Source: RMDB library OK2TST, as collected in RNAgym. This 177-nucleotide RNA was probed chemically with DMS and 2A3. Reactivities are rounded to 0.1 and cut off at 0 and 3. The RNA was probed in 150 mM KOAc, 10 mM MgCl2 and 150 mM bicine (pH 8.5) at 24 C. For DMS, 3,633 sequencing reads were counted.

[RMDB]
RNA sequence: GGGAACGACUCGAGUAGAGUCGAAAAAGAACCGGGUCAUUCCUGGUCGCCUCCUCCGCUUCGGCACGGAUGGAAUGCCAGAUGGGAUCGACCUGAUCGAGACCGGCAUUCACUUUUGAAGACAUGAUAGUAGGUAUGAGUUCGCUCAUACCUACUAAAAAGAAACAACAACAACAAC
Reactivity to DMS in 0.01 (KOAc 150mM, MgCl2 10mM, bicine 150mM(pH8.5), 24C), signal-to-noise 4, nucleotides 027 to 126: a080g000a200a050c010c000g000g000g010u010c260a150u010u000c010c000u000g000g010u000c030g020c050c020u000c040c020u000c020c020g030c040u000u010c050g020g030c120a110c080g010g000a080u000g010g000a010a020u000g010c010c010a210g000a120u010g010g020g000a130u000c010g000a060c080c130u020g000a130u000c000g000a070g010a180c010c010g010g000c010a010u000u000c010a080c100u010u010u000u010g010a060a050g000a080c160a090u000g020a200
Reactivity to 2A3 in 0.01 (KOAc 150mM, MgCl2 10mM, bicine 150mM(pH8.5), 24C), signal-to-noise 4, nucleotides 027 to 126: a020g030a030a000c010c000g020g010g020u090c070a120u280u300c010c000u000g020g020u020c020g030c000c010u010c000c020u000c020c030g010c020u050u050c030g060g000c060a020c080g050g030a030u080g050g020a010a010u020g000c010c010a140g060a300u300g040g000g020a020u000c030g030a030c030c130u190g030a240u020c010g000a000g010a040c010c000g000g000c010a010u030u010c000a040c060u090u080u080u140g100a100a040g060a050c040a090u160g000a040